[RMDB]
RNA sequence: GGGAACGACUCGAGUAGAGUCGAAAACCAUCAGCCUACAGACCUGGUACCUGGAUUUUUGCCCGAGAUGAUUCCUACCACCUUACUACUGACGAAGACACCCAUUCCAGUGGACCACUGUGACCCAGUGGAUUAAAGCGUUCGCGCUUUAAUCCACAAAAGAAACAACAACAACAAC
Reactivity to DMS in 0.01 (KOAc 150mM, MgCl2 10mM, bicine 150mM(pH8.5), 24C), signal-to-noise 1, nucleotides 027 to 126: c020c010a120u010c040a050g020c040c010u000a030c140a060g000a220c150c000u000g070g040u010a020c000c070u000g000g000a060u000u130u000u010u000g030c020c030c020g010a130g010a080u040g000a100u000u000c010c000u000a140c030c030a040c020c020u040u010a060c040u030a090c040u000g000a040c000g000a130a070g080a020c140a120c000c010c010a050u010u010c040c020a130g000u040g000g000a120c030c030a010c000u000g040u000g000a140c070c040c010a090
Reactivity to 2A3 in 0.01 (KOAc 150mM, MgCl2 10mM, bicine 150mM(pH8.5), 24C), signal-to-noise 4, nucleotides 027 to 126: c020c010a010u080c020a010g040c020c020u050a040c020a030g050a090c000c010u020g070g000u040a040c010c020u050g060g090a180u020u000u000u080u180g050c000c010c020g040a040g020a060u080g030a040u060u040c010c000u020a070c010c020a030c010c000u080u040a060c040u010a010c020u050g060a030c020g020a050a030g030a010c030a050c010c000c000a040u070u030c000c000a010g070u050g050g020a030c000c000a020c020u010g030u070g020a030c000c020c000a010
The record gives the reactivity of an RNA of 177 nucleotides to DMS and 2A3. Reactivities are given for positions 27 through 126. For DMS, 1,386 sequencing reads were counted. For DMS the reverse transcriptase was MarathonRT. The 2A3 profile rests on 2,922 reads. High 2A3 reactivity points to a flexible backbone, as in loops and unpaired stretches. 2A3 adducts were read by reverse transcription with SuperScript II with manganese.